[RMDB]
RNA sequence: GGGAACGACUCGAGUAGAGUCGAAAAAGCAGCGUGUUUCGGACGAGUUUAUGUGGGCUGAUGCUGAUUACCGUCUGGGUGUGCUUCAGGAUCUGAUUUCGCCUGCUCUUGGUGCUUCGAUUGGUCGCUAAUUCAACCACUUCGGUGGUUGAAUUAGAAAAGAAACAACAACAACAAC
Reactivity to DMS in 0.01 (KOAc 150mM, MgCl2 10mM, bicine 150mM(pH8.5), 24C), signal-to-noise 3, nucleotides 027 to 126: a070g000c060a070g010c070g010u000g010u000u000u010c050g000g010a090c070g000a090g010u000u000u000a050u010g020u010g010g010g010c050u000g020a100u010g010c040u010g010a090u000u000a070c080c050g000u000c080u010g030g010g010u000g010u000g010c060u000u000c060a060g000g010a080u000c050u000g000a100u000u000u000c070g020c050c010u000g020c050u000c050u010u000g010g020u010g010c060u000u000c060g000a130u000u000g010g010u000c070g000
Reactivity to 2A3 in 0.01 (KOAc 150mM, MgCl2 10mM, bicine 150mM(pH8.5), 24C), signal-to-noise 3, nucleotides 027 to 126: a000g050c080a000g010c010g010u030g050u040u070u070c030g020g050a010c020g020a040g070u070u100u090a150u150g060u110g000g060g000c060u030g030a110u120g090c010u030g020a190u030u130a100c050c000g030u070c070u060g060g000g030u020g030u020g040c000u030u030c000a040g070g010a070u000c020u090g060a130u050u080u060c040g000c020c030u020g010c000u030c030u050u090g010g010u030g020c020u020u060c020g090a140u080u070g080g000u070c030g000

This 177-nucleotide RNA was probed chemically with DMS and 2A3.
It was measured as part of the RMDB library OK2TST.
The RNA was probed in 150 mM KOAc, 10 mM MgCl2 and 150 mM bicine (pH 8.5) at 24 C.
The 2A3 profile rests on 2,302 reads.
For DMS the reverse transcriptase was MarathonRT.